This 177-nucleotide RNA was probed chemically with 2A3. The reactions ran in a buffer of 150 mM KOAc, 10 mM MgCl2 and 150 mM bicine (pH 8.5), at 24 C. For 2A3 the reverse transcriptase was SuperScript II with manganese. Reactivities are rounded to 0.1 and cut off at 0 and 3.
RNA sequence: GGGAACGACUCGAGUAGAGUCGAAAACAUAUCAUGUGGGACUUUGACAAGCUCGGAGGUUUCUGAGGGUAAUCCACUCUGAAUGGGAUCAGGUCAGUCAUUUACUUUGUAUGCACAGACUAUUAAACCUGCAGGACGUUUUCGAACGUCCUGCAGGAAAAGAAACAACAACAACAAC
Reactivity to 2A3 in 0.01 (KOAc 150mM, MgCl2 10mM, bicine 150mM(pH8.5), 24C), signal-to-noise 1, nucleotides 027 to 126: c000a000u170a060u090c050a000u110g000u030g060g010g090a050c000u100u000u040g000a000c030a070a030g050c000u000c070g000g000a040g040g000u000u080u000c000u000g020a000g000g060g000u000a000a000u030c000c000a070c050u040c050u050g140a100a060u010g070g000g000a000u020c010a000g110g000u000c000a000g020u000c030a050u030u100u080a070c120u000u090u240g130u040a090u030g010c040a030c030a030g120a000c060u050a030u260u070a100a270a040